The record gives the reactivity of an RNA of 207 nucleotides to DMS and 2A3. It was measured as part of the RMDB library M2RFOK. 2A3 is a SHAPE reagent: it acylates the 2'-hydroxyl of flexible nucleotides of all four kinds. The reactions ran in a buffer of 150 mM KOAc, 10 mM MgCl2 and 150 mM bicine (pH 8.5), at 24 C.
RNA sequence: GGGAACGACUCGAGUAGAGUCGAAAAUACUUAGUACGCGCGUAGUUGCAGGCAUUCCGGGUGCAGCAACUGACGCGGAAGACUUUUCCCAGAGUGUCCGCUUCAACUGGCGUGCUGAGUAGUGCACGAAUUGCACGUACGUUCGCGUACGUGCAAACUAAUAGAACUAAUUCGUUAGUUCUAUUAGAAAAGAAACAACAACAACAAC
Reactivity to DMS in 0.01 (KOAc 150mM, MgCl2 10mM, bicine 150mM(pH8.5), 24C), signal-to-noise 5, nucleotides 027 to 156: u000a030c020u000u010a040g020u000a030c000g030c020g050c090g040u000a050g030u000u000g010c010a150g020g000c000a030u000u010c030c300g020g060g090u000g000c040a300g010c020a020a050c010u010g000a070c060g020c020g000g000a060a120g010a090c070u000u000u000u010c010c010c020a300g010a070g010u000g000u010c010c060g010c020u010u000c040a100a130c100u000g020g020c020g020u010g020c010u000g010a050g030u000a060g010u000g000c060a110c070g000a060a160u000u000g020c010a000c000g000u000a000c000g010u000u010c300g030c010g010u000a010c000g000u000g000c000a000a000a090
Reactivity to 2A3 in 0.01 (KOAc 150mM, MgCl2 10mM, bicine 150mM(pH8.5), 24C), signal-to-noise 7, nucleotides 027 to 156: u020a000c000u010u000a000g000u010a000c010g040c070g030c050g130u080a020g010u030u000g000c040a100g070g020c010a020u090u090c110c150g170g060g010u010g000c030a020g000c000a020a020c020u030g050a040c050g000c010g010g010a010a010g160a020c010u060u030u070u050c010c010c010a000g000a000g010u020g020u000c000c010g020c010u040u050c040a140a130c130u200g050g000c000g000u000g000c000u000g000a000g000u030a030g040u080g060c110a030c190g100a130a140u050u010g000c000a000c000g000u000a000c000g000u010u050c240g000c000g060u000a000c000g000u000g000c000a000a000a000